[RMDB]
RNA sequence: GGGAACGACUCGAGUAGAGUCGAAAAGAAGAGGAAUAUGCGCAGGCCAAUGGCGGCAAUGGAAGGUGCUCCGGCUCUCAUUGACGUGUCUUUCCAUCGGCAAGAUCGUGCAUAUGGGCCAAGGCGACAUAAUGGACCGUUUCGACGGUCCAUUAUGAAAAGAAACAACAACAACAAC
Reactivity to 2A3 in 0.01 (KOAc 150mM, MgCl2 10mM, bicine 150mM(pH8.5), 24C), signal-to-noise 2, nucleotides 027 to 126: g060a020a010g050a030g050g050a070a030u030a030u080g030c040g000c020a030g040g040c010c040a060a020u050g040g010c040g000g000c030a000a030u070g070g110a070a030g090g030u090g000c010u010c030c050g000g020c000u000c000u010c030a030u000u060g030a020c030g030u050g040u150c060u040u100u010c000c010a070u040c040g000g000c010a010a060g020a140u140c050g000u040g030c010a020u030a030u090g030g040g000c020c020a030a050g070g010c010g000a030
Reactivity to DMS in 0.01 (KOAc 150mM, MgCl2 10mM, bicine 150mM(pH8.5), 24C), signal-to-noise 4, nucleotides 027 to 126: g000a110a060g010a140g000g010a160a040u010a030u000g020c000g020c020a140g000g000c010c020a060a040u000g010g030c110g010g020c020a030a030u030g020g000a090a060g010g000u010g010c050u010c100c080g010g010c000u000c040u010c030a080u010u000g000a040c020g020u010g010u010c090u000u010u010c020c000a040u010c080g010g000c040a060a060g010a090u000c120g030u000g000c020a020u000a020u000g010g000g010c040c040a060a120g000g010c060g000a180